[RMDB]
RNA sequence: GGGAACGACUCGAGUAGAGUCGAAAACUUGUACGCUUCGGCGUACAAGAAAUCCCAGGUAUGCAUCCAACAACAACAACAACAGAUGCUUACCAUCUUGUAAAACCAAAGACUUCGGUCUUUGGAAUCAACAAUUUACCUUCGGGUAAAUUGUUGAAAAAGAAACAACAACAACAAC
Reactivity to DMS in 0.01 (KOAc 150mM, MgCl2 10mM, bicine 150mM(pH8.5), 24C), signal-to-noise 2, nucleotides 027 to 126: c000u000u000g010u000a000c000g050c000u000u030c130g060g010c010g020u010a020c000a000a010g000a100a100a170u010c010c000c000a110g000g000u000a010u000g000c010a000u000c020c160a130a070c190a060a160c130a060a040c190a040a040c130a060a050c280a110g010a010u000g000c000u000u000a000c030c010a150u010c080u010u000g010u010a050a120a190a120c010c000a000a000a000g000a010c000u000u000c230g000g000u000c000u000u010u000g000g000a020a010
Reactivity to 2A3 in 0.01 (KOAc 150mM, MgCl2 10mM, bicine 150mM(pH8.5), 24C), signal-to-noise 2, nucleotides 027 to 126: c000u000u000g000u000a000c000g010c000u030u030c170g130g000c000g000u000a000c000a000a000g000a010a030a000u000c020c000c000a010g000g020u020a010u020g010c000a000u000c080c010a020a020c020a010a020c010a060a030c010a020a020c170a010a010c030a070g000a000u000g000c000u000u000a000c020c000a070u050c070u050u130g160u160a040a040a050a080c000c000a030a000a000g010a000c010u050u120c300g100g000u040c000u000u000u000g000g000a010a030

This 177-nucleotide RNA was probed chemically with DMS and 2A3. For 2A3, 2,643 sequencing reads were counted. For DMS the reverse transcriptase was MarathonRT. Values cover nucleotides 27 to 126. Conditions: 150 mM KOAc, 10 mM MgCl2 and 150 mM bicine (pH 8.5), 24 C. The data come from the RNA Mapping Database (RMDB), library M2PK50.